[RMDB]
RNA sequence: GGGAACGACUCGAGUAGAGUCGAAAAGAAAGAAAUCAAAGCGGAUUCUAGUCUAAUCGGAGAGACUAGUCGAAUAACUCGUUCUUGACAAUAUCCGUAUUAGAUCUAACUGAGGGAUGAGUAGAAAGGGUUAGAUACAGUUCGCUGUAUCUAACCCAAAAGAAACAACAACAACAAC
Reactivity to DMS in 0.01 (KOAc 150mM, MgCl2 10mM, bicine 150mM(pH8.5), 24C), signal-to-noise 3, nucleotides 027 to 126: g020a080a110a080g000a080a100a020u030c040a020a100a220g000c040g010g010a050u000u010c030u000a020g000u000c000u030a060a130u000c060g020g000a120g000a040g020a060c040u010a040g000u030c090g000a070a120u070a040a070c130u000c030g010u000u000c020u010u030g000a070c080a070a050u010a020u010c020c000g030u010a080u010u000a170g000a010u010c080u030a050a120c120u010g000a050g000g000g000a060u000g030a020g040u000a070g000a070a090a120
Reactivity to 2A3 in 0.01 (KOAc 150mM, MgCl2 10mM, bicine 150mM(pH8.5), 24C), signal-to-noise 3, nucleotides 027 to 126: g090a030a020a000g140a060a100a010u180c040a000a050a070g050c030g010g010a000u100u000c020u020a000g000u000c010u020a040a130u210c100g120g050a070g000a000g030a080c010u000a000g040u010c010g040a050a050u240a120a030c030u010c030g040u070u000c040u030u150g020a000c010a010a020u030a030u100c000c000g000u010a090u020u060a020g000a020u070c030u110a080a090c030u050g070a080g030g030g000a020u040g020a040g120u110a030g150a050a140a010

An RNA of 177 nucleotides, treated with DMS and 2A3 and read out base by base. The 2A3 profile rests on 2,418 reads. The reactions ran in a buffer of 150 mM KOAc, 10 mM MgCl2 and 150 mM bicine (pH 8.5), at 24 C. It was measured as part of the RMDB library OK1LIB.